This 177-nucleotide RNA was probed chemically with DMS and 2A3. Source: RMDB library OK2TST, as collected in RNAgym.

RNA sequence: GGGAACGACUCGAGUAGAGUCGAAAACUCGUGGGUGGGGAACCGAGUGCGCGAGUGGAAGCGUGGCGACUACCGGGACCUUCUCUCGGAGGACGAUGUACCCGACGAGGUGGAAACUGCAUGACGACCCAGUAUUAGGUUUCGACCUAAUACUGGGAAAAGAAACAACAACAACAAC
Reactivity to DMS in 0.01 (KOAc 150mM, MgCl2 10mM, bicine 150mM(pH8.5), 24C), signal-to-noise 5, nucleotides 027 to 126: c030u000c040g030u010g010g000g020u000g000g000g010g010a110a200c070c030g010a100g020u010g010c050g010c020g010a110g030u020g010g010a110a110g010c060g020u000g010g020c020g000a130c040u000a110c090c030g010g010g000a170c100c070u010u000c060u010c040u010c030g010g010a130g000g000a130c100g010a090u010g000u000a100c040c010c000g010a110c090g000a040g000g010u000g010g000a070a080a090c080u000g010c060a080u000g000a100c150g000a260
Reactivity to 2A3 in 0.01 (KOAc 150mM, MgCl2 10mM, bicine 150mM(pH8.5), 24C), signal-to-noise 1, nucleotides 027 to 126: c010u010c020g030u080g010g010g030u080g000g030g020g000a010a020c030c010g010a050g020u090g040c030g000c010g020a050g050u110g030g100a060a010g050c040g040u060g090g030c040g020a050c030u080a100c050c000g000g020g030a050c020c000u140u080c040u010c010u000c020g050g030a050g000g030a020c050g030a060u130g050u170a070c000c000c000g010a040c050g020a040g000g020u060g030g000a060a080a050c030u100g020c030a080u080g050a060c050g050a030